[RMDB]
RNA sequence: GGGAACGACUCGAGUAGAGUCGAAAACGGUAGACAAGUGUGGAUGGAGUGAAGGGAGGAGUCCUGUGGGUGUUGUCGGCAACGGCGACCGAGCGUCCGUGCCAAGCGCUGCGUCGCCAGGGGUCUCCGGUCGGAAGGCUGGCGGUCCCGGGCGCAUUCGUCAAUAUAUCUUCGGAUAUAUUGACGAAAAAGAAACAACAACAACAAC
Reactivity to 2A3 in 0.01 (KOAc 150mM, MgCl2 10mM, bicine 150mM(pH8.5), 24C), signal-to-noise 2, nucleotides 027 to 156: c010g030g040u070a040g040a070c060a160a090g040u020g030u040g110g030a060u050g020g020a020g030u060g050a110a080g040g000g000a000g010g010a010g030u040c010c020u060g010u100g020g010g000u050g020u020u050g040u050c070g020g000c030a090a070c030g020g000c000g050a060c070c060g050a050g070c020g000u030c020c000g000u020g000c010c010a060a030g030c090g010c100u070g000c030g020u020c000g050c080c020a060g000g020g000g000u000c010u000c020c000g000g000u010c000g040g100a120a060g000g000c000u010g000g000c000g000g000u020c020c030c070g010g010g010c000g000c010a000u010
This 207-nucleotide RNA was probed chemically with 2A3.
Values cover nucleotides 27 to 156.
For 2A3 the reverse transcriptase was SuperScript II with manganese.
For 2A3, 2,015 sequencing reads were counted.